[RMDB]
Source: RMDB library M2RFPK, as collected in RNAgym. The record gives the reactivity of an RNA of 207 nucleotides to 2A3. Reactivities are given for positions 27 through 156. 2A3 adducts were read by reverse transcription with SuperScript II with manganese. The RNA was probed in 150 mM KOAc, 10 mM MgCl2 and 150 mM bicine (pH 8.5) at 24 C.

RNA sequence: GGGAACGACUCGAGUAGAGUCGAAAAACAUAUUACGAUAUGAUUCAGAUGGUGUCUUACUGGUUCUUACCAAGGGACAUAAUGGUUUCUUGUUUCCAACCAAAGAACAAGUGGCGAGCCUGAAUAAAAAACUGACUGCCGUUCGCGGCAGUCAGAAGCAUUCUUCCUUGUUCGCAAGGAAGAAUGCAAAAGAAACAACAACAACAAC
Reactivity to 2A3 in 0.01 (KOAc 150mM, MgCl2 10mM, bicine 150mM(pH8.5), 24C), signal-to-noise 1, nucleotides 027 to 156: a000c000a000u050a020u100u090a020c110g020a070u020a030u140g100a070u140u230c100a120g040a230u100g040g000u000g000u020c010u000u120a090c020u030g000g020u020u160c090u210u160a010c010c010a010a040g010g020g010a010c030a040u070a020a180u070g090g000u010u000u010c030u000u010g000u040u000u090c020c050a110a170c000c010a000a010a170g020a020a010c000a000a040g010u010g040g010c040g040a010g030c000c000u020g100a070a000u110a150a130a000a000a000a010c000u000g020a000c000u000g000c000c040g000u040u110c230g000c000g170g010c000a000g000u000c000a000g000a010a000